This 207-nucleotide RNA was probed chemically with 2A3. For 2A3 the reverse transcriptase was SuperScript II with manganese. Conditions: 150 mM KOAc, 10 mM MgCl2 and 150 mM bicine (pH 8.5), 24 C.
[RMDB]
RNA sequence: GGGAACGACUCGAGUAGAGUCGAAAAAUUGCGAUUUUCAUUUCUAACCCCGACGGCAACAGGUGGGUGCGAGUCAGCUCGCCGCGCCUCGCGCAGUUGCCCAGAGAGUUGGAUGCCCCACCCAAGAAGCACCUAAUUCAAUUUACACUAAUGAGUCAUGAAAAUAUUCUUUCGAGAAUAUUUUCAUAAAAGAAACAACAACAACAAC
Reactivity to 2A3 in 0.01 (KOAc 150mM, MgCl2 10mM, bicine 150mM(pH8.5), 24C), signal-to-noise 2, nucleotides 027 to 156: a010u120u110g020c030g080a050u050u020u050u080c030a010u150u050u040c050u070a080a070c030c020c010c010g050a060c010g000g020c000a030a000c000a070g060g000u030g040g000g000u100g040c010g020a070g060u100c000a070g010c000u030c070g020c100c010g000c000g000c000c050u100c010g000c000g000c010a020g010u010u010g000c000c030c000a050g120a010g010a020g010u040u030g020g000a030u080g020c060c000c010c000a000c000c010c010a070a030g020a040a010g000c010a020c020c010u070a060a050u080u030c020a000a070u100u150u200a050c080a010c160u300a090a130u300g040a020g140u300c090